[RMDB]
RNA sequence: GGGAACGACUCGAGUAGAGUCGAAAAGGGGUCGAGAUCAACAGCGUCAUGGAGGUGAUGACCCACACUGAAGCCUCCACGGUGUGGCAAGCCUCGUGACGACAUGAUCUCGACGGAGGCACCCAAAGUCAAUUCCCUCUUCGGAGGGAAUUGACAACGUUGGUGCUAGGUUCGCCUAGCACCAACGAAAAGAAACAACAACAACAAC
Reactivity to 2A3 in 0.01 (KOAc 150mM, MgCl2 10mM, bicine 150mM(pH8.5), 24C), signal-to-noise 1, nucleotides 027 to 156: g020g000g070g030u000c000g000a000g010a010u040c070a210a100c110a160g050c030g030u010c010a020u120g300g030a030g000g020u000g020a280u030g000a010c000c110c000a010c010a000c010u070g040a120a030g020c000c000u000c000c000a000c000g000g000u000g000u000g000g000c030a080a100g000c000c000u000c000g010u000g000a000c020g030a040c040a230u300g000a000u000c000u000c010g000a000c000g000g000a000g010g000c000a030c010c000c010a040a130a060g030u020c000a000a000u000u000c020c120c020u000c000u000u100c150g130g010a000g040g000g000a000a000u000u000g000a000c010a010a000